[RMDB]
RNA sequence: GGGAACGACUCGAGUAGAGUCGAAAACAAUCGCUACACCGUAUUCGCCAUCUUCCACGCGGUUGAGGAUGUAAGCCGUCGCUACGCGGGUAUCCGGCGUGACGAGGAACACAAUGGCGCUGACGGUGCUAACCGUACUUUUCGAAGUACGGUUAGCAAAAGAAACAACAACAACAAC
Reactivity to DMS in 0.01 (KOAc 150mM, MgCl2 10mM, bicine 150mM(pH8.5), 24C), signal-to-noise 5, nucleotides 027 to 126: c100a100a060u020c090g020c120u000a170c090a090c010c000g010u000a160u000u010c010g020c020c010a030u000c090u000u000c010c010a110c130g020c030g010g020u000u000g010a110g010g010a080u000g000u000a110a130g000c020c010g010u010c060g010c080u010a030c100g000c000g000g000g010u010a060u000c010c000g010g010c020g010u000g000a040c090g010a080g010g010a080a040c230a060c210a150a110u000g000g000c020g010c200u000g010a050c010g000g010u010
Reactivity to 2A3 in 0.01 (KOAc 150mM, MgCl2 10mM, bicine 150mM(pH8.5), 24C), signal-to-noise 6, nucleotides 027 to 126: c020a020a100u160c090g070c170u200a050c030a000c050c000g010u020a140u040u060c010g000c010c000a030u030c040u020u000c000c010a030c030g040c030g050g120u060u150g090a120g060g020a020u040g070u150a090a050g130c030c000g080u080c040g050c180u080a040c080g010c000g010g000g080u110a070u030c020c010g120g000c010g030u010g020a060c080g000a030g040g010a050a020c130a010c020a150a080u040g000g000c010g020c050u050g030a010c000g000g000u020
Background: Source: RMDB library OK2TRN, as collected in RNAgym. This 177-nucleotide RNA was probed chemically with DMS and 2A3. DMS adducts were read by reverse transcription with MarathonRT. The RNA was probed in 150 mM KOAc, 10 mM MgCl2 and 150 mM bicine (pH 8.5) at 24 C. 2A3 adducts were read by reverse transcription with SuperScript II with manganese.